Conditions: 150 mM KOAc, 10 mM MgCl2 and 150 mM bicine (pH 8.5), 24 C. Chemical mapping of a 177-nucleotide RNA with 2A3 and DMS. For 2A3 the reverse transcriptase was SuperScript II with manganese. High 2A3 reactivity points to a flexible backbone, as in loops and unpaired stretches. The data come from the RNA Mapping Database (RMDB), library OK1LIB.

RNA sequence: GGGAACGACUCGAGUAGAGUCGAAAAUGAUAUAAUCUGCAUCCGACAACGAUCACCAACUUCCACCUUGAUCGAUUGGUCGCAUAAUCCAUUAAAUUUGGAAGUAGUCGCUCAUGCUUAAAAUUACAAUUAUGGGUGACUUCGGUCACCCAUAAUUAAAAGAAACAACAACAACAAC
Reactivity to 2A3 in 0.01 (KOAc 150mM, MgCl2 10mM, bicine 150mM(pH8.5), 24C), signal-to-noise 2, nucleotides 027 to 126: u150g030a000u010a000u040a150a100u040c010u050g000c000a020u050c050c000g030a020c020a230a030c020g030a020u040c010a040c110c000a170a010c000u030u000c000c010a010c020c010u020u000g020a010u040c010g020a050u000u050g030g080u030c000g000c000a000u020a060a010u030c000c000a000u090u120a080a040a110u140u090u070g010g010a000a000g070u020a030g020u030c010g030c050u000c010a000u100g000c010u100u140a090a060a060a110u160u060a050c080
Reactivity to DMS in 0.01 (KOAc 150mM, MgCl2 10mM, bicine 150mM(pH8.5), 24C), signal-to-noise 2, nucleotides 027 to 126: u010g000a160u040a140u010a050a100u020c040u000g010c020a040u020c210c000g000a080c040a080a150c110g000a060u010c080a090c070c120a020a050c050u040u000c010c020a020c300c110u000u000g000a090u010c150g010a060u000u000g000g010u020c080g010c050a090u030a000a010u010c000c030a030u000u000a020a020a080u000u000u020g020g010a020a030g020u010a030g000u000c020g000c040u040c080a050u000g000c050u080u010a060a100a020a120u070u020a020c120